[RMDB]
RNA sequence: GGGAACGACUCGAGUAGAGUCGAAAACAGUCAACGUGAAGGCGGGCCAGACCAUCGCCGCAUUCUACCAGAGCACCGUCAUGAUCUUUGGCACGAUGGCUCGCUACAUCCUCAGAGUUAGGGAAAAGCCACGUAGUAUAUUCGUAUACUACGUGGCAAAAGAAACAACAACAACAAC
Reactivity to 2A3 in 0.01 (KOAc 150mM, MgCl2 10mM, bicine 150mM(pH8.5), 24C), signal-to-noise 3, nucleotides 027 to 126: c050a010g110u070c060a040a040c070g030u070g120a110a020g060g010c000g000g020g010c000c020a030g010a100c020c030a080u100c080g030c030c020g030c010a020u130u010c040u070a070c010c040a000g010a000g050c060a040c070c040g150u110c050a120u120g100a110u060c040u040u080u070g010g000c030a010c090g060a050u050g000g000c000u010c020g010c000u030a020c020a060u080c020c010u020c040a050g030a020g220u110u090a030g030g030g000a040a030a040a010
Reactivity to DMS in 0.01 (KOAc 150mM, MgCl2 10mM, bicine 150mM(pH8.5), 24C), signal-to-noise 4, nucleotides 027 to 126: c100a080g000u010c060a070a070c100g020u010g010a130a150g000g030c090g000g000g010c030c060a100g010a190c110c060a070u000c070g000c040c050g010c070a050u010u000c060u000a110c050c050a040g000a040g000c070a060c030c030g000u010c100a090u010g000a110u000c020u000u010u010g010g030c070a030c070g000a140u000g000g010c010u000c080g020c050u000a050c080a090u000c010c010u010c100a160g000a110g000u020u000a090g000g010g000a060a050a070a140
Overview: The record gives the reactivity of an RNA of 177 nucleotides to 2A3 and DMS. 2A3 is a SHAPE reagent: it acylates the 2'-hydroxyl of flexible nucleotides of all four kinds. For 2A3 the reverse transcriptase was SuperScript II with manganese. The data come from the RNA Mapping Database (RMDB), library OK2TRN. DMS adducts were read by reverse transcription with MarathonRT.